About this RNA: The record gives the reactivity of an RNA of 177 nucleotides to DMS. It was measured as part of the RMDB library M2PK50. The reactions ran in a buffer of 150 mM KOAc, 10 mM MgCl2 and 150 mM bicine (pH 8.5), at 24 C. Values are in units of 0.01, from 0 to 300, in steps of 10.
[RMDB]
RNA sequence: GGGAACGACUCGAGUAGAGUCGAAAAGAAGUACAGUUCGCUGUACUUCAAAUUCCCACCACCGCCGCCGGCGCCGCCGCCUCCACCGCCGCCACCACCAAAAAAGCAUUUAGUUCGCUAAAUGCAACUAAUUCUCACUGUUCGCAGUGAGAAUUAGAAAAGAAACAACAACAACAAC
Reactivity to DMS in 0.01 (KOAc 150mM, MgCl2 10mM, bicine 150mM(pH8.5), 24C), signal-to-noise 2, nucleotides 027 to 126: g000a000a010g000u010a010c000a020g000u010u030c230g010c010u010g010u010a010c000u000u010c000a020a070a250u010u000c000c000c000a220c110c050a080c080c080g010c040c050g010c080c030g010g000c050g010c040c030g040c070c060g010c030c030u010c030c040a050c090c040g020c050c030g010c010c040a050c020c030a100c050c110a000a010a050a080a140a140g000c000a010u000u000u010a000g000u000u010c190g010c000u000a010a000a010u000g000c000a080a080